[RMDB]
The data come from the RNA Mapping Database (RMDB), library RFM100. An RNA of 177 nucleotides, treated with 2A3 and DMS and read out base by base.
RNA sequence: GGGAACGACUCGAGUAGAGUCGAAAAUGCGGUGUUGUCUACCGUAGAGGAUUUCUCUCGUGCCUUGUUACGGGUUUGAAGGGCGAGCCUAUCUUCGGAGGGUAAAUUGUAACUUUCGCCAAACAGGGUUGUGUAAAGGCUUCGGCCUUUACACAACAAAAGAAACAACAACAACAAC
Reactivity to 2A3 in 0.01 (KOAc 150mM, MgCl2 10mM, bicine 150mM(pH8.5), 24C), signal-to-noise 3, nucleotides 027 to 126: u040g000c080g000g000u070g060u120u240g030u080c110u100a040c020c000g000u050a050g050a020g030g080a130u090u110u000c050u000c000u000c090g060u050g070c010c000u050u070g030u040u070a060c060g030g040g000u050u140u200g080a070a010g020g020g020c000g000a030g000c000c000u290a300u100c000u060u110c240g110g010a000g050g000g000u110a080a120a200u180u090g040u060a140a080c000u070u050u050c000g000c000c000a130a000a000c020a000g140g000
Reactivity to DMS in 0.01 (KOAc 150mM, MgCl2 10mM, bicine 150mM(pH8.5), 24C), signal-to-noise 2, nucleotides 027 to 126: u060g020c010g000g020u000g000u000u040g050u000c120u030a030c020c000g010u020a020g010a150g000g000a130u030u030u010c050u010c020u020c020g000u000g030c000c030u000u010g000u000u010a050c080g010g050g030u000u020u060g000a070a030g010g010g040c030g000a080g000c010c000u020a070u000c000u000u040c090g000g040a110g000g000g010u000a050a060a110u010u020g030u030a100a170c080u000u000u000c010g000c030c030a050a090a050c090a080g030g020
The RNA was probed in 150 mM KOAc, 10 mM MgCl2 and 150 mM bicine (pH 8.5) at 24 C.
For 2A3 the reverse transcriptase was SuperScript II with manganese.